[RMDB]
RNA sequence: GGGAACGACUCGAGUAGAGUCGAAAAGCGGCGAUGCAGAGACGGUGGGCCAGCGUCUCUGGACUGGCCCUUAGUGCGAAGGCAGGUCCUGCUUACGCAUGCCUUUUGGCUUUUAGCCGCGAAAGAAGGGAUUGGGCAUGUUCGCAUGCUCAAUCCCAAAAGAAACAACAACAACAAC
Reactivity to DMS in 0.01 (KOAc 150mM, MgCl2 10mM, bicine 150mM(pH8.5), 24C), signal-to-noise 2, nucleotides 027 to 126: g030c010g000g020c010g000a080u060g040c000a000g020a020g030a010c140g040g020u000g000g000g010c000c000a010g010c090g000u010c150u030c170u020g000g000a160c010u000g010g040c000c000c000u000u020a030g050u010g000c000g000a100a070g000g020c000a000g010g020u060c170c010u000g000c000u020u000a170c020g000c050a010u000g000c040c000u060u000u020u030g000g000c000u010u010u020u010a270g000c020c000g000c020g020a080a190a170g010a110a180
Reactivity to 2A3 in 0.01 (KOAc 150mM, MgCl2 10mM, bicine 150mM(pH8.5), 24C), signal-to-noise 2, nucleotides 027 to 126: g010c010g020g000c000g020a030u080g030c000a010g020a010g010a130c050g020g070u090g000g000g000c000c000a000g010c010g210u010c050u000c010u130g060g010a030c000u010g010g000c000c000c000u000u060a020g010u000g000c000g000a030a020g020g000c000a010g020g170u180c120c050u000g000c000u010u000a010c000g000c000a000u050g000c000c000u060u060u000u130g100g000c000u060u060u050u100a050g000c000c000g010c030g040a120a140a050g200a040a070
Source: RMDB library OK1LIB, as collected in RNAgym. This 177-nucleotide RNA was probed chemically with DMS and 2A3. The reactions ran in a buffer of 150 mM KOAc, 10 mM MgCl2 and 150 mM bicine (pH 8.5), at 24 C. 2A3 adducts were read by reverse transcription with SuperScript II with manganese. The DMS profile rests on 3,581 reads. Reactivities are given for positions 27 through 126.